[RMDB]
RNA sequence: GGGAACGACUCGAGUAGAGUCGAAAAGGCGCACUUACUCGACCGGCUAUUUGUUUCGUGAACGAUUCCACUAGCUGGGUGAUGCCGUGGGUCAUGAGUAUGGAAUUAUUGUAAACAAAGUUAAUGUAUUCAUACUUUGUUUUAUCGAUCUCAAAAGCAUUUGAGCACCUUUCGAGGUGCUCAAAUGAAAAGAAACAACAACAACAAC
Reactivity to 2A3 in 0.01 (KOAc 150mM, MgCl2 10mM, bicine 150mM(pH8.5), 24C), signal-to-noise 2, nucleotides 027 to 156: g010g000c030g000c080a010c020u020u110a040c040u090c030g090a000c000c000g010g000c000u010a020u000u040u030g030u000u000u000c080g070u240g280a270a110c040g000a000u000u030c020c010a000c010u010a000g000c010u000g020g060g020u070g020a040u070g030c060c020g000u010g000g010g050u030c020a100u100g030a030g010u090a050u150g050g060a070a130u130u020a080u040u200g070u120a040a030a000c000a000a000a000g070u090u150a180a070u030g110u100a180u110u250c020a000u040a060c000u010u030u010g000u020u010u030u000a120u040c020g010a050u000c010u060c050a030a100a020a050g100
Reactivity to DMS in 0.01 (KOAc 150mM, MgCl2 10mM, bicine 150mM(pH8.5), 24C), signal-to-noise 1, nucleotides 027 to 156: g040g000c020g010c050a140c010u010u000a030c060u000c000g010a050c030c000g020g040c010u000a010u000u000u000g030u000u000u000c030g060u000g020a140a150c050g020a080u000u030c030c060a100c150u000a030g000c000u010g040g010g040u000g000a080u000g020c030c180g000u000g000g040g040u000c030a110u000g010a050g040u020a100u000g000g030a090a080u000u010a030u010u000g000u000a030a060a060c000a010a030a020g020u010u010a060a050u020g000u000a150u020u010c050a100u000a030c000u000u000u000g010u000u000u000u000a100u000c090g000a210u000c030u000c030a050a040a090a160g020